[RMDB]
RNA sequence: GGGAACGACUCGAGUAGAGUCGAAAACUCGUGCUUCAGCCUCCCAAGUAGCUGGGAUUACAGGUGUGUGUCACCAUGCCUGGCUAACUUUUGCAUUUUUAGUAGAGACAGGGUUUGUUCAUAUUGACCAUGCUGGUCUCAAACUCCUGACCUCAGACAGUAUUACGGAGUUCGCUCCGUAAUACUGAAAAGAAACAACAACAACAAC
Reactivity to 2A3 in 0.01 (KOAc 150mM, MgCl2 10mM, bicine 150mM(pH8.5), 24C), signal-to-noise 6, nucleotides 027 to 156: c030u040c030g100u100g020c040u120u150c080a050g030c000c050u020c020c000c000a010a020g010u010a000g000c020u030g040g000g020a070u110u180a120c080a150g000g010u030g000u020g050u080g150u140c010a010c020c010a040u060g010c000c000u000g010g000c000u040a070a130c000u020u050u090u150g030c040a080u040u030u050u090u180a120g030u080a040g020a000g010a040c000a000g010g000g020u010u010u020g040u050u080c090a070u150a130u240u180g020a010c010c010a050u200g130c180u210g090g010u010c000u000c020a000a000a010c070u110c030c000u040g030a120c000c010u030c010a010g030a040
Reactivity to DMS in 0.01 (KOAc 150mM, MgCl2 10mM, bicine 150mM(pH8.5), 24C), signal-to-noise 3, nucleotides 027 to 156: c020u000c050g030u000g030c010u000u000c070a070g000c030c020u000c010c000c020a060a090g010u010a030g000c020u000g000g010g000a090u000u000a060c080a040g020g030u000g010u000g020u000g010u000c040a090c080c010a100u000g010c000c010u010g010g000c030u000a030a050c050u000u000u000u000g020c050a230u010u020u000u000u010a110g020u010a180g010a060g000a130c030a050g000g020g020u000u000u000g010u000u000c090a150u000a150u010u020g010a030c000c010a130u010g010c110u000g000g040u000c010u000c020a020a060a060c030u010c010c020u000g010a110c020c000u020c020a120g010a240